[RMDB]
RNA sequence: GGGAACGACUCGAGUAGAGUCGAAAACUUUGAACCCAUUGAUGAUGGGUGCUAUCACGGAUGUAUUAAAAAUAGCCUUAAAGGCCUUAGCAAGCGAGACCCCUGAGCCGUGCACCCGCUUGGUGCGGUAGCUAUCACGGUCCGUGGGUGGAAACACGCACAUUACAUGAUUCGUCAUGUAAUGUGCAAAAGAAACAACAACAACAAC
Reactivity to DMS in 0.01 (KOAc 150mM, MgCl2 10mM, bicine 150mM(pH8.5), 24C), signal-to-noise 2, nucleotides 027 to 156: c080u000u010u010g000a110a100c010c010c010a090u000u000g000a080u000g000a090u000g010g020g010u000g010c010u000a090u000c060a080c030g020g030a100u010g010u020a130u000u000a030a080a110a100a080u010a050g020c020c010u000u000a070a100a120g040g030c000c010u000u000a090g010c050a060a130g000c020g010a160g020a090c010c010c010c030u000g010a050g010c040c000g000u000g000c170a100c120c000c070g000c080u000u000g050g000u030g030c040g020g000u000a040g010c070u000a120u000c050a050c030g000g030u000c010c020g010u000g000g040g010u010g000g000a110a040a120c090a120c220
Reactivity to 2A3 in 0.01 (KOAc 150mM, MgCl2 10mM, bicine 150mM(pH8.5), 24C), signal-to-noise 5, nucleotides 027 to 156: c050u120u070u170g030a030a040c000c000c010a010u010u140g170a130u050g010a010u000g020g000g030u030g030c030u060a050u120c050a020c140g080g010a090u070g070u150a190u090u200a100a020a030a030a040u070a030g000c010c010u080u080a120a190a060g020g000c010c010u070u080a030g020c080a100a000g070c030g040a030g040a050c020c000c000c030u030g020a020g010c010c000g000u010g030c000a050c000c020c010g000c030u030u120g160g060u190g030c010g000g020u030a020g030c030u080a030u220c000a000c010g040g010u000c010c010g060u270g010g010g000u020g000g080a070a120a010c100a010c070